Chemical mapping of a 177-nucleotide RNA with 2A3 and DMS.
DMS adducts were read by reverse transcription with MarathonRT.
Conditions: 150 mM KOAc, 10 mM MgCl2 and 150 mM bicine (pH 8.5), 24 C.
High 2A3 reactivity points to a flexible backbone, as in loops and unpaired stretches.
RNA sequence: GGGAACGACUCGAGUAGAGUCGAAAAGAAAGAAAGAAAGAAUACAUGAUAUAACACUAAUAUGUCCAUUUCCAUUUCAUGAUUCGCACGACAUAGAAAUGAACAUAUUGUUGACAUAUUAUGUAAAAACGGUAAUCCCAUUCGUGGGAUUACCGUUAAAAGAAACAACAACAACAAC
Reactivity to 2A3 in 0.01 (KOAc 150mM, MgCl2 10mM, bicine 150mM(pH8.5), 24C), signal-to-noise 4, nucleotides 027 to 126: g070a010a090a000g120a040a050a030g140a030a170a010g070a110a010u030a060c000a000u000g010a000u010a000u030a070a000c000a000c040u050a020a000u010a010u000g000u000c020c000a000u010u030u000c050c000a010u020u020u080c030a020u070g110a260u100u250c090g070c080a060c100g000a010c020a020u020a020g010a000a010a000u000g000a010a000c000a000u000a010u000u000g050u030u070g010a020c040a030u010a000u000u010a000u000g000u010a050a000a000
Reactivity to DMS in 0.01 (KOAc 150mM, MgCl2 10mM, bicine 150mM(pH8.5), 24C), signal-to-noise 2, nucleotides 027 to 126: g010a130a090a110g010a110a080a040g010a050a070a120g000a150a130u010a000c020a050u000g000a000u000a000u000a030a200c040a010c040u010a010a020u000a010u000g000u000c010c000a000u000u000u010c000c040a040u010u000u010c000a110u000g000a300u040u010c280g090c080a000c070g000a010c060a010u010a070g000a010a000a010u000g010a050a010c000a000u000a000u030u000g000u000u010g000a150c240a030u000a000u000u000a000u000g000u000a020a010a040